[RMDB]
RNA sequence: GGGAACGACUCGAGUAGAGUCGAAAAUGAGAGCUACAAUAAUUAUGUACCCUCAUAUGUUAAACCUGAUAGUGUGUCUACCAGCGAUUUAGGUAGUCUCAUUGAUUGUAAUGCGGCUUCAGUUAACCGUUCAAUAUCAGUUCGCUGAUAUUGAACGAAAAGAAACAACAACAACAAC
Reactivity to 2A3 in 0.01 (KOAc 150mM, MgCl2 10mM, bicine 150mM(pH8.5), 24C), signal-to-noise 3, nucleotides 027 to 126: u000g010a010g010a000g030c060u030a000c020a080a090u190a190a130u200u160a080u120g010u040a020c020c000c000u000c030a020u060a050u120g070u050u090a040a040a030c000c000u020g030a040u040a070g030u040g010u000g020u040c010u010a050c020c010a030g070c100g120a090u050u050u120a030g020g000u000a010g010u000c000u010c000a030u030u040g070a060u110u180g100u190a050a030u060g020c030g010g000c000u070u050c020a050g040u070u040a030a030c030
Reactivity to DMS in 0.01 (KOAc 150mM, MgCl2 10mM, bicine 150mM(pH8.5), 24C), signal-to-noise 5, nucleotides 027 to 126: u000g010a030g000a020g000c270u000a000c010a040a090u020a150a150u000u000a080u000g010u000a050c040c020c010u000c010a000u000a060u000g010u010u000a060a090a100c030c010u000g000a050u000a030g010u000g020u000g020u000c010u000a050c020c010a130g010c130g020a110u010u010u010a060g000g020u000a010g000u000c020u000c010a020u000u000g000a100u000u010g010u010a020a060u010g000c140g010g010c030u000u000c040a080g000u000u000a050a090c180